[RMDB]
RNA sequence: GGGAACGACUCGAGUAGAGUCGAAAAAGAAGGGCCAAUAAACGGCGGGGGUAACUAUGACCCUCUCAAGGUAGCGUAAUACCUAGCCGCUUAAUUGGCGGCUCGCAUGAAGGUUCAACGAGAGUCCGAGGUAUGGACAUUUCGAUGUCCAUACCUCAAAAGAAACAACAACAACAAC
Reactivity to 2A3 in 0.01 (KOAc 150mM, MgCl2 10mM, bicine 150mM(pH8.5), 24C), signal-to-noise 4, nucleotides 027 to 126: a010g200a040a050g050g040g000c010c010a020a020u050a030a050a000c020g010g000c000g100g020g000g030g000u060a130a040c100u050a140u250g090a040c000c000c010u010c020u030c040a050a040g000g000u020a030g030c070g140u160a120a020u010a050c010c020u000a000g000c000c000g000c020u020u060a120a050u100u080g000g010c020g000g020c010u010c000g040c040a020u160g040a060a010g040g010u080u040c020a000a010c030g010a000g020a010g130u000c010c030
Reactivity to DMS in 0.01 (KOAc 150mM, MgCl2 10mM, bicine 150mM(pH8.5), 24C), signal-to-noise 2, nucleotides 027 to 126: a060g010a090a160g020g020g000c000c000a000a090u030a020a010a080c000g000g000c060g000g030g040g000g030u010a100a060c140u010a020u070g000a030c070c000c000u060c190u010c210a130a040g000g000u000a050g060c240g020u020a030a060u000a050c010c000u020a060g000c000c020g000c030u000u010a060a040u000u000g000g010c050g010g000c000u000c070g000c160a040u040g000a140a030g000g030u030u000c010a060a030c000g010a120g000a060g010u000c020c110
The record gives the reactivity of an RNA of 177 nucleotides to 2A3 and DMS. The 2A3 profile rests on 2,721 reads. The reactions ran in a buffer of 150 mM KOAc, 10 mM MgCl2 and 150 mM bicine (pH 8.5), at 24 C. For 2A3 the reverse transcriptase was SuperScript II with manganese.